The data come from the RNA Mapping Database (RMDB), library OK2TRN. Structure probing data (DMS and 2A3) for a 177-nucleotide construct. For 2A3, 1,481 sequencing reads were counted. Reactivities are rounded to 0.1 and cut off at 0 and 3. DMS adducts were read by reverse transcription with MarathonRT. The reactions ran in a buffer of 150 mM KOAc, 10 mM MgCl2 and 150 mM bicine (pH 8.5), at 24 C. The DMS profile rests on 1,289 reads.

RNA sequence: GGGAACGACUCGAGUAGAGUCGAAAAAUCGGCCGUGCGCAGCGAUCCGGCCUAUCUGACGAUCUCGUACCGUCUGGCCGUGUGGCCCGGAUCGCGCGGAUCUCUGCGCCGAUCGAUCGCGCAGUACGCUUCACUGAUGCUUCGGCAUCAGUGAAGCAAAAGAAACAACAACAACAAC
Reactivity to DMS in 0.01 (KOAc 150mM, MgCl2 10mM, bicine 150mM(pH8.5), 24C), signal-to-noise 1, nucleotides 027 to 126: a030u000c030g010g000c050c010g000u000g010c000g000c000a010g020c100g000a030u000c010c000g010g020c030c050u010a010u000c030u010g010a040c000g020a000u000c020u010c220g030u000a050c070c030g020u000c020u010g060g020c000c020g030u020g000u010g020g020c000c010c300g010g000a020u000c300g000c120g060c020g000g000a020u000c010u000c000u010g000c060g000c000c010g040a000u000c030g010a050u000c050g000c060g000c080a110g000u000a100c180
Reactivity to 2A3 in 0.01 (KOAc 150mM, MgCl2 10mM, bicine 150mM(pH8.5), 24C), signal-to-noise 2, nucleotides 027 to 126: a010u020c010g000g000c040c010g090u210g050c010g000c010a030g010c010g030a010u000c030c000g100g020c020c010u060a100u070c080u040g060a090c060g030a040u020c120u070c130g040u240a160c040c000g080u020c110u060g010g020c040c060g210u260g160u300g120g000c000c020c010g020g000a000u000c070g020c020g000c000g040g000a000u040c020u000c000u060g000c030g000c010c000g010a030u050c000g000a020u070c000g000c000g000c080a040g100u140a060c080